The record gives the reactivity of an RNA of 207 nucleotides to DMS and 2A3. For 2A3 the reverse transcriptase was SuperScript II with manganese. For DMS, 1,790 sequencing reads were counted. The 2A3 profile rests on 590 reads. High 2A3 reactivity points to a flexible backbone, as in loops and unpaired stretches.
RNA sequence: GGGAACGACUCGAGUAGAGUCGAAAAAGAGAUAAUUAUGAAUGUCAACAAUGUAAGAGAGACGGCAAGUUAACGACAUAUGACAAAAGCAAGCGUAAGUCGUUGGAUGUAGAUCAUAUAUUAUCGCUAGAACAUCAUCCGGAGUUUGCUCAUGACAGUAAUAGGACCACUUCGGUGGUCCUAUUACAAAAGAAACAACAACAACAAC
Reactivity to DMS in 0.01 (KOAc 150mM, MgCl2 10mM, bicine 150mM(pH8.5), 24C), signal-to-noise 1, nucleotides 027 to 156: a030g040a040g040a070u000a020a060u000u000a010u040g020a070a070u020g000u000c000a090a100c070a080a140u010g000u010a200a140g020a070g000a150g060a110c020g010g000c040a110a180g000u010u010a050a040c040g000a080c010a180u000a060u000g000a190c030a030a100a150a140g000c130a080a060g020c060g050u010a040a120g000u010c010g000u000u000g010g020a000u020g030u000a150g030a170u000c010a070u010a080u000a020u010u000a000u000c050g000c010u020a080g010a060a090c080a090u000c070a160u000c010c030g000g010a110g000u000u000u000g010c050u030c080a120u000g050a090c080a080
Reactivity to 2A3 in 0.01 (KOAc 150mM, MgCl2 10mM, bicine 150mM(pH8.5), 24C), signal-to-noise 2, nucleotides 027 to 156: a000g070a000g020a000u100a140a040u120u050a030u130g030a040a050u070g000u040c010a000a030c020a170a120u200g020u280a130a020g040a000g040a020g000a080c070g000g050c040a050a070g090u050u040a030a020c010g000a000c010a010u090a020u090g090a060c140a010a070a000a010g110c070a010a040g010c000g020u060a090a000g000u020c000g000u030u010g000g060a000u010g010u040a060g000a060u060c040a000u100a080u040a030u100u050a040u090c000g010c040u090a040g070a240a080c050a090u160c010a040u020c000c040g090g000a070g020u070u110u030g020c020u050c090a020u120g070a030c010a070